Chemical mapping of a 177-nucleotide RNA with 2A3 and DMS. High DMS reactivity at an A or C suggests that its Watson-Crick edge is free. It was measured as part of the RMDB library TTRDES. The RNA was probed in 150 mM KOAc, 10 mM MgCl2 and 150 mM bicine (pH 8.5) at 24 C.
RNA sequence: GGGAACGACUCGAGUAGAGUCGAAAAGAUAUGGAAUCUCUGAGCUAGACCACUGUCGGAAACGACAGAAUGGUCUUGGACCUCAUAAGAGAUUCCUAAGUCAAAAGUGCUGGGUUCGCCCAGCACACGUUAUUACUUGCUUCGGCAAGUAAUAACGAAAAGAAACAACAACAACAAC
Reactivity to 2A3 in 0.01 (KOAc 150mM, MgCl2 10mM, bicine 150mM(pH8.5), 24C), signal-to-noise 2, nucleotides 027 to 126: g010a020u090a020u150g000g010a000a000u010c010u000c010u050g010a010g060c010u040a010g000a010c000c000a020c000u000g000u000c000g030g060a130a050a070c020g020a000c020a000g020a050a090u080g000g000u000c000u020u010g010g040a040c010c030u000c010a060u160a300a070g000a000g010a010u010u000c000c000u000a060a020g040u020c030a000a000a110a240g000u000g000c020u000g080g000g000u060u130c250g120c020c000c000a000g030c020a000c000a000
Reactivity to DMS in 0.01 (KOAc 150mM, MgCl2 10mM, bicine 150mM(pH8.5), 24C), signal-to-noise 4, nucleotides 027 to 126: g030a030u010a300u000g000g000a000a010u000c010u000c010u000g000a050g010c040u010a020g000a000c000c010a080c010u000g000u000c000g000g000a140a110a170c020g010a020c000a000g010a080a130u000g010g000u000c000u000u020g010g000a110c300c010u000c010a120u000a300a090g000a030g020a020u000u000c010c000u000a010a050g000u010c030a070a060a120a160g010u000g000c000u000g000g000g000u000u000c300g000c000c000c000a000g030c000a000c010a020